This 177-nucleotide RNA was probed chemically with DMS and 2A3. 2A3 is a SHAPE reagent: it acylates the 2'-hydroxyl of flexible nucleotides of all four kinds. The RNA was probed in 150 mM KOAc, 10 mM MgCl2 and 150 mM bicine (pH 8.5) at 24 C.
[RMDB]
RNA sequence: GGGAACGACUCGAGUAGAGUCGAAAAAGGUAGUCACGGUCGUUGUAGCUGGUUUUGUAUCCAGGCAGGGCGAGCAGACCGACUAGGGCGAUCGCGCAGGUGGCGACGAGAACGGGCAGCGGCCAGCCUGUCGUUAAAACUUCGGUUUUAACGACAGAAAAGAAACAACAACAACAAC
Reactivity to DMS in 0.01 (KOAc 150mM, MgCl2 10mM, bicine 150mM(pH8.5), 24C), signal-to-noise 3, nucleotides 027 to 126: a100g010g020u000a050g020u010c050a080c060g010g000u010c020g000u000u010g030u000a110g010c000u000g010g010u000u010u010u010g010u010a080u030c020c030a080g000g000c060a050g010g000g030c030g010a080g010c050a110g010a080c040c030g000a120c080u010a090g000g000g000c030g030a050u000c050g020c080g010c090a070g000g010u020g000g010c050g000a060c040g010a100g000a070a090c080g000g010g000c040a090g010c050g000g020c020c020a080g010c080
Reactivity to 2A3 in 0.01 (KOAc 150mM, MgCl2 10mM, bicine 150mM(pH8.5), 24C), signal-to-noise 5, nucleotides 027 to 126: a000g110g020u080a030g010u070c040a020c120g020g010u030c020g050u030u040g090u060a040g060c010u040g040g010u050u020u110u130g040u050a110u040c010c010a030g040g040c040a020g030g030g030c030g010a010g010c040a020g030a060c010c020g020a040c030u070a030g000g040g000c010g030a050u050c030g000c010g010c030a010g010g100u050g030g030c020g000a030c030g050a060g010a100a010c040g000g030g020c020a010g020c000g010g020c010c010a020g010c020